[RMDB]
RNA sequence: GGGAACGACUCGAGUAGAGUCGAAAACGCGCACCGACGACCUUGACAUCGCCGGGCAUCACCGUGUAGGCCCACGGGCGGUGCCGUCCGCUGCCCACGGUGCCGCGCAAUGGCCGCCCGCUCAUCGCCUUGAAUGCGUUUUCGAACGCAUUCAAGGAAAAGAAACAACAACAACAAC
Reactivity to DMS in 0.01 (KOAc 150mM, MgCl2 10mM, bicine 150mM(pH8.5), 24C), signal-to-noise 2, nucleotides 027 to 126: c100g010c080g020c100a200c050c000g010a040c070g020a030c080c080u010u010g000a120c240a150u000c070g010c030c020g010g000g000c080a100u010c070a280c080c020g000u000g000u010a140g010g000c030c060c080a080c140g010g010g000c020g000g010u000g000c030c000g010u030c020c050g010c070u000g010c010c010c090a080c030g020g030u000g000c030c040g030c000g020c090a080a130u000g000g010c050c010g000c020c000c000g030c090u030c120a050u000c170g000
Reactivity to 2A3 in 0.01 (KOAc 150mM, MgCl2 10mM, bicine 150mM(pH8.5), 24C), signal-to-noise 2, nucleotides 027 to 126: c040g070c010g010c040a100c110c010g050a050c010g030a030c030c130u120u210g030a060c060a100u030c040g000c040c000g030g020g010c010a050u120c030a000c020c010g000u030g050u040a070g040g000c030c010c000a020c030g010g040g000c020g040g000u040g080c020c000g000u000c020c070g060c050u080g030c020c000c010a000c010g010g000u000g000c030c010g000c000g030c010a000a050u080g020g000c020c020g030c000c000c000g060c040u040c040a160u120c080g040
Structure probing data (DMS and 2A3) for a 177-nucleotide construct. The 2A3 profile rests on 3,072 reads. For 2A3 the reverse transcriptase was SuperScript II with manganese. The RNA was probed in 150 mM KOAc, 10 mM MgCl2 and 150 mM bicine (pH 8.5) at 24 C.